RNA sequence: GGGAACGACUCGAGUAGAGUCGAAAAACAAACAAACCAAAAGAACAAAGAGUCGCGCAAAUAUCUGGCUCGACUGAUGCGCGACAAAUCGAGCCAUGAAAAGAAACAAGGAAAACAACAAUAGAAACGUCAUGUAGCUCUUCGGAGCUGCAUGACGAAAAGAAACAACAACAACAAC
Reactivity to DMS in 0.01 (KOAc 150mM, MgCl2 10mM, bicine 150mM(pH8.5), 24C), signal-to-noise 1, nucleotides 027 to 126: a220c070a100a120a030c130a190a000a060c090c020a000a010a130a100g060a180a010c090a290a100a040g000a120g030u000c000g000c000g000c010a060a000a270u000a040u000c040u000g000g000c000u000c000g000a090c270u000g000a100u000g000c000g010c010g000a000c040a050a060a030u000c060g000a000g000c000c000a150u080g020a020a100a100a000g000a070a000a010c150a190a070g300g000a030a300a070a000c090a090a040c080a070a220u040a040g000a040a140a020
Reactivity to 2A3 in 0.01 (KOAc 150mM, MgCl2 10mM, bicine 150mM(pH8.5), 24C), signal-to-noise 1, nucleotides 027 to 126: a000c100a110a030a000c020a020a050a030c020c000a030a040a030a020g040a030a020c030a020a100a000g070a010g070u000c000g000c030g000c010a060a160a000u180a090u080c020u000g000g000c000u000c050g000a000c110u060g000a010u100g000c000g000c000g050a000c030a000a000a000u060c040g000a010g020c010c000a050u170g030a090a030a010a020g030a050a010a000c050a000a000g190g000a050a300a020a000c140a030a000c000a000a130u030a240g040a060a090a000